[RMDB]
RNA sequence: GGGAACGACUCGAGUAGAGUCGAAAAAAAUGAGGUUUCAGUUAUUUGGGCUCGUGAGAGCAGCCUGGGGAACCUGGUUAUAAUAGCGGCGCUAUCAGAAAUUCAACGCUAUCAAAUUUUGAUGGUGGAUUACGGUAAAGUUCGCUUUACCGUAAUCAAAAGAAACAACAACAACAAC
Reactivity to 2A3 in 0.01 (KOAc 150mM, MgCl2 10mM, bicine 150mM(pH8.5), 24C), signal-to-noise 1, nucleotides 027 to 126: a000a000a000u090g020a020g040g000u020u020u040c040a050g010u100u130a180u180u120u110g020g020g000c000u000c030g050u100g090a170g000a000g000c010a010g040c010c000u030g000g000g020g050a000a010c000c000u010g060g000u070u140a130u010a170a070u040a010g190c050g080g000c000g000c030u010a010u190c050a080g090a090a060a000u230u090c040a170a000c010g000c000u040a010u010c000a000a190a210u290u300u110u040g010a000u030g000g070u020g100
Reactivity to DMS in 0.01 (KOAc 150mM, MgCl2 10mM, bicine 150mM(pH8.5), 24C), signal-to-noise 2, nucleotides 027 to 126: a100a050a060u000g010a010g020g010u000u000u010c010a090g010u020u010a090u000u010u000g000g000g020c020u000c060g000u010g000a240g010a070g000c010a060g020c000c010u000g010g010g010g000a050a050c020c000u010g010g010u000u000a060u000a050a050u000a060g000c010g010g020c170g000c020u000a030u010c080a110g000a190a060a090u000u000c090a050a300c060g000c020u000a010u000c000a010a040a260u000u000u010u000g010a020u000g010g030u000g020